Structure probing data (DMS and 2A3) for a 207-nucleotide construct. Source: RMDB library OK3TST, as collected in RNAgym. Reactivities are rounded to 0.1 and cut off at 0 and 3.
[RMDB]
RNA sequence: GGGAACGACUCGAGUAGAGUCGAAAAAGAAGGAUUAAGAGAAAUGUUGAAACACUAAUCCGGUUGAUGAUGCAGGCUUCAGGCCUGGAGUGCAUAAAACUCCCUUCAGGACAGAUUAUUACCCACAGACUAACCAAGAAGAUCAGACAAGAAGAUGCAGACUCUAAAGGUUCGCCUUUAGAGUCUGAAAAGAAACAACAACAACAAC
Reactivity to DMS in 0.01 (KOAc 150mM, MgCl2 10mM, bicine 150mM(pH8.5), 24C), signal-to-noise 1, nucleotides 027 to 156: a000g050a080a030g000g030a110u000u010a110a110g030a170g030a050a100a130u000g030u000u000g000a240a130a160c100a060c080u000a070a030u020c030c030g030g020u000u000g000a120u020g000a110u020g000c030a060g030g010c040u000u000c170a120g060g010c000c030u000g000g000a010g040u010g000c030a180u000a040a060a120a210c070u010c030c030c030u000u000c070a060g000g000a030c030a080g010a080u000u010a130u000u010a080c000c000c030a030c120a100g000a080c050u010a030a080c000c030a040a100g000a080a120g010a070u000c040a050g000a070c030a090a070g000a060a060g010a200u000g020
Reactivity to 2A3 in 0.01 (KOAc 150mM, MgCl2 10mM, bicine 150mM(pH8.5), 24C), signal-to-noise 1, nucleotides 027 to 156: a010g060a090a000g010g040a020u130u090a110a000g020a010g030a080a120a110u150g010u190u110g080a160a140a000c010a030c010u100a080a020u030c010c000g070g000u060u100g060a080u000g020a040u040g060c030a010g020g000c000u110u130c080a010g040g030c020c000u000g000g050a040g000u040g010c050a020u220a060a020a070a060c050u070c010c000c000u010u050c060a000g000g040a000c000a010g040a000u040u070a050u050u170a150c010c010c000a000c010a010g040a080c020u010a030a040c040c060a040a010g060a030a000g010a050u060c040a000g020a050c020a170a040g210a020a030g060a050u210g000